[RMDB]
RNA sequence: GGGAACGACUCGAGUAGAGUCGAAAAGAGCGUGUAGAAACUCGACGUACGAAACGCACCUUUGUACGACUCUUUUGAGUCGGUAGUUUUCUACCGUCGAGGUAGGUGCGUGAUAUACACGCGAAAAGGGUAGCAGAGUGUUCGCAUUCUGUUACCCAAAAGAAACAACAACAACAAC
Reactivity to DMS in 0.01 (KOAc 150mM, MgCl2 10mM, bicine 150mM(pH8.5), 24C), signal-to-noise 9, nucleotides 027 to 126: g010a240g000c000g010u000g000u000a010g000a070a070a070c010u000c000g010a010c010g010u000a010c010g000a010a020a010c000g000c000a010c010c150u010u040u040g000u000a010c000g010a010c000u000c000u010u020u030u040g010a010g010u000c000g010g000u000a010g000u020u030u020u020c000u000a010c000c000g010u000c000g010a010g000g010u040a020g000g000u000g000c000g010u000g000a060u010a190u000a010c000a000c000g000c000g010a040a080a100a110
Reactivity to 2A3 in 0.01 (KOAc 150mM, MgCl2 10mM, bicine 150mM(pH8.5), 24C), signal-to-noise 9, nucleotides 027 to 126: g080a010g000c000g000u000g000u010a010g020a050a050a000c000u000c000g000a000c000g010u000a000c010g030a020a000a000c000g000c000a000c000c010u070u110u250g000u000a000c000g000a000c000u010c010u040u170u170u300g000a000g000u000c000g000g000u000a000g000u010u130u170u070c000u000a000c000c000g000u000c000g000a000g000g010u020a000g000g000u000g000c000g000u000g000a000u020a000u000a010c000a000c000g000c000g000a010a010a010a000